Conditions: 150 mM KOAc, 10 mM MgCl2 and 150 mM bicine (pH 8.5), 24 C. Structure probing data (2A3 and DMS) for a 177-nucleotide construct. For DMS, 2,029 sequencing reads were counted.
[RMDB]
RNA sequence: GGGAACGACUCGAGUAGAGUCGAAAAAGGAAAACACCGAUGGACAGGAAAUGAAAGCCGCUGCAGGCGUCAGAAGCGAGCUGGAAGGUGCUGACAAGACCGCCGGUGAACAUUCGCGAGCAUCGCGACCCACCGAUUGGUUCGCCAAUCGGUGGGUAAAAGAAACAACAACAACAAC
Reactivity to 2A3 in 0.01 (KOAc 150mM, MgCl2 10mM, bicine 150mM(pH8.5), 24C), signal-to-noise 2, nucleotides 027 to 126: a000g120g000a020a060a010a040c000a050c030c010g000a060u050g070g000a010c120a130g030g040a060a060a000u080g020a010a000a050g030c000c000g080c000u010g000c010a010g090g000c000g060u080c010a020g010a150a080g100c100g050a000g040c050u000g040g070a040a080g050g020u060g090c020u030g020a070c030a040a110g000a070c000c000g000c000c020g060g000u090g000a000a030c050a080u130u090c000g000c000g000a020g210c010a080u230c000g000c000g010
Reactivity to DMS in 0.01 (KOAc 150mM, MgCl2 10mM, bicine 150mM(pH8.5), 24C), signal-to-noise 2, nucleotides 027 to 126: a130g000g060a040a050a090a080c050a040c040c010g010a050u040g000g000a160c050a080g010g000a080a100a060u020g000a300a130a060g030c030c010g000c060u030g000c110a100g030g040c060g000u050c000a030g000a080a080g010c060g000a010g030c040u000g010g050a130a070g000g030u000g010c000u010g000a120c130a030a080g000a040c000c000g040c070c000g000g010u030g000a180a110c060a190u000u000c000g020c000g020a140g030c120a130u010c030g030c000g020